[RMDB]
RNA sequence: GGGAACGACUCGAGUAGAGUCGAAAAAUGGGUGUCAUCCCAGUGGAAGCUGGAGGACGAAGGCGUGCGUGCUGUGGGGGUGUUGCAACGCGGGGGGAUGGCGCUUCUGCGGGGGAAGCUCUGUGCACUAGUUAGAUGCUUUCGAGCAUCUAACUAGAAAAGAAACAACAACAACAAC
Reactivity to 2A3 in 0.01 (KOAc 150mM, MgCl2 10mM, bicine 150mM(pH8.5), 24C), signal-to-noise 1, nucleotides 027 to 126: a000u060g030g000g010u060g060u050c030a140u120c060c010c010a000g050u060g100g070a060a030g030c050u040g000g010a050g040g000a060c090g080a120a040g080g000c020g040u130g010c050g020u060g070c080u040g030u110g010g000g010g000g040u090g070u080u140g060c050a090a090c060g020c030g040g030g030g000g000g000a030u050g040g000c050g020c060u080u060c020u070g000c060g010g000g020g000g020a000a010g030c000u040c030u080g050u070g050c060a050
Reactivity to DMS in 0.01 (KOAc 150mM, MgCl2 10mM, bicine 150mM(pH8.5), 24C), signal-to-noise 2, nucleotides 027 to 126: a100u000g000g000g000u000g020u000c050a060u000c040c000c000a110g000u000g010g030a100a140g000c060u000g010g030a100g020g000a090c120g010a110a090g000g000c060g020u010g010c110g040u000g010c050u020g000u020g000g000g000g000g000u000g020u000u010g030c090a030a090c130g020c050g010g040g020g010g000g000a090u010g010g000c060g020c040u000u000c070u010g030c060g020g040g020g000g020a080a090g000c020u000c050u000g010u010g000c120a220

An RNA of 177 nucleotides, treated with 2A3 and DMS and read out base by base.
For 2A3 the reverse transcriptase was SuperScript II with manganese.
Values cover nucleotides 27 to 126.
Conditions: 150 mM KOAc, 10 mM MgCl2 and 150 mM bicine (pH 8.5), 24 C.
Source: RMDB library OK2TRN, as collected in RNAgym.